[RMDB]
RNA sequence: GGGAACGACUCGAGUAGAGUCGAAAAGAAAAGACGUUCAGGUCGUUGGCAUCAUAGGCCACCACGGUCGGUUUACCCGUGGUGCCGCUGCUCGCGUGGAUGCGGCGCAGUUGGUCGCGGUCCGUCGACUUAUAAUUAACUUCGGUUAAUUAUAAGUAAAAGAAACAACAACAACAAC
Reactivity to DMS in 0.01 (KOAc 150mM, MgCl2 10mM, bicine 150mM(pH8.5), 24C), signal-to-noise 9, nucleotides 027 to 126: g000a080a060a100a100g010a040c020g010u020u010c210a130g020g010u000c010g020u000u010g030g010c020a080u010c180a120u000a100g010g010c110c040a020c010c010a010c010g000g000u000c120g010g010u010u010u010a110c190c000c000g020u000g000g020u000g010c010c020g000c020u000g000c010u000c020g010c020g010u010g010g010a140u010g010c010g010g000c160g010c010a020g000u000u000g040g010u000c070g010c010g000g000u000c020c020g000u000c030g000
Reactivity to 2A3 in 0.01 (KOAc 150mM, MgCl2 10mM, bicine 150mM(pH8.5), 24C), signal-to-noise 9, nucleotides 027 to 126: g070a000a080a000a020g020a010c040g020u110u100c160a040g020g030u030c020g050u160u260g040g000c010a040u060c030a040u200a120g060g000c080c020a010c010c000a010c000g030g030u110c070g030g090u130u160u120a080c010c010c000g000u000g000g010u010g000c010c010g000c000u000g000c010u010c010g020c020g050u160g250g150a170u300g030c010g030g000c120g000c010a020g010u170u240g030g000u030c010g000c010g020g000u010c020c010g010u020c000g010